[RMDB]
Structure probing data (2A3) for a 177-nucleotide construct. It was measured as part of the RMDB library OK1LIB.
RNA sequence: GGGAACGACUCGAGUAGAGUCGAAAACAUGCGUCUGUCUCCACUCUUGGUCGGCGGUGUGUGUGACCCCGGGAAAUGGCCAGUGCAUGCGCAAGGUGUUGCGGGUGGAUCUGGAUGUGGUCCAGAGCAGCGUAGUCCCUUUCGAGGGACUACGCUGAAAAGAAACAACAACAACAAC
Reactivity to 2A3 in 0.01 (KOAc 150mM, MgCl2 10mM, bicine 150mM(pH8.5), 24C), signal-to-noise 2, nucleotides 027 to 126: c000a000u090g010c020g050u090c060u060g030u000c000u000c050c020a070c040u110c010u060u080g100g010u070c000g000g030c010g100g010u040g000u000g000u010g040u040g100a080c010c040c000c010g000g000g060a060a200a170u140g040g000c000c000a030g020u000g100c020a020u050g050c020g040c050a040a050g220g030u120g020u100u040g020c010g010g020g010u000g000g040a080u070c040u000g010g020a070u070g090u130g130g010u000c000c000a000g000a020g010